[RMDB]
Description
An RNA of 177 nucleotides, treated with DMS and 2A3 and read out base by base. Reactivities are given for positions 27 through 126. It was measured as part of the RMDB library M2PK90. 2A3 adducts were read by reverse transcription with SuperScript II with manganese. For DMS the reverse transcriptase was MarathonRT. The reactions ran in a buffer of 150 mM KOAc, 10 mM MgCl2 and 150 mM bicine (pH 8.5), at 24 C. The DMS profile rests on 1,249 reads.
RNA sequence: GGGAACGACUCGAGUAGAGUCGAAAAGAAAAACGCCAAAAAGCAUUUAAAGUAUGCGGUCUAGGCGGGCAUGUUACCAUGCAAAGUUAUCGACAAUAACUUAGACCAAGUACGAAUGUACAAAAAAACCGGAUUUAAGAUUCGUCUUAAAUCCGGUAAAAGAAACAACAACAACAAC
Reactivity to DMS in 0.01 (KOAc 150mM, MgCl2 10mM, bicine 150mM(pH8.5), 24C), signal-to-noise 2, nucleotides 027 to 126: g010a090a090a040a090a060c050g000c010c010a050a020a000a060a060g010c020a010u010u000u020a140a060a150g000u020a020u000g000c140g010g010u000c000u000a130g010g020c010g000g000g010c010a010u000g000u000u030a170c300c000a050u010g000c010a030a040a010g000u000u000a020u000c140g010a140c210a050a080u010a020a000c000u000u010a030g000a000c050c010a040a140g010u010a000c000g000a030a090u020g000u000a030c040a050a000a030a070a050a080
Reactivity to 2A3 in 0.01 (KOAc 150mM, MgCl2 10mM, bicine 150mM(pH8.5), 24C), signal-to-noise 1, nucleotides 027 to 126: g050a020a080a000a010a030c030g000c010c000a060a040a000a000a020g020c000a010u060u070u260a080a070a010g040u050a020u010g020c030g000g020u000c010u020a050g020g000c000g000g000g050c010a000u050g000u100u180a080c070c100a010u000g000c010a020a020a010g000u000u010a020u110c130g100a070c120a100a030u020a000a000c020u010u000a000g010a000c010c010a060a000g000u010a000c010g030a080a040u200g010u000a050c000a000a160a020a000a000a000